[RMDB]
RNA sequence: GGGAACGACUCGAGUAGAGUCGAAAAAGUGAAGAUGGGAACUUCAAGGUAGAAAAGAAAAAGUGCCUGAAUGGCUUCUCAAGGUCGCUUGAGGCAGACUGCUACCUAGAAGGAGUGCUAGCUGCAGGCGGACCCUAUUAUUCGUAAUAGGGUCCGCAAAAGAAACAACAACAACAAC
Reactivity to DMS in 0.01 (KOAc 150mM, MgCl2 10mM, bicine 150mM(pH8.5), 24C), signal-to-noise 2, nucleotides 027 to 126: a090g030u000g010a040a060g010a060u000g000g000g010a150a130c010u000u000c000a170a040g000g000u020a000g010a050a060a100a120g010a080a110a030a030a040g050u010g000c010c000u000g040a040a060u010g000g000c010u010u020c100u030c220a090a100g010g020u010c070g010c090u020u000g010a020g010g000c020a050g000a030c010u000g010c090u000a000c020c000u020a080g000a030a000g000g000a040g010u020g000c020u020a050g000c070u020g010c070a100g000
Reactivity to 2A3 in 0.01 (KOAc 150mM, MgCl2 10mM, bicine 150mM(pH8.5), 24C), signal-to-noise 3, nucleotides 027 to 126: a000g200u110g040a050a000g030a050u050g040g000g000a030a030c000u000u000c010a060a070g090g030u060a060g090a060a100a100a000g210a010a090a070a010a000g040u040g010c010c040u050g050a050a050u050g020g000c040u170u000c080u050c160a080a140g050g030u020c000g040c150u090u090g080a030g010g010c000a000g000a020c020u020g040c030u030a000c000c010u020a020g050a000a000g010g060a000g000u040g000c000u010a060g010c030u000g040c030a060g060

The record gives the reactivity of an RNA of 177 nucleotides to DMS and 2A3.
For 2A3 the reverse transcriptase was SuperScript II with manganese.
The data come from the RNA Mapping Database (RMDB), library OK1LIB.
The RNA was probed in 150 mM KOAc, 10 mM MgCl2 and 150 mM bicine (pH 8.5) at 24 C.
DMS (dimethyl sulfate) methylates the pairing face of unpaired adenines and cytosines.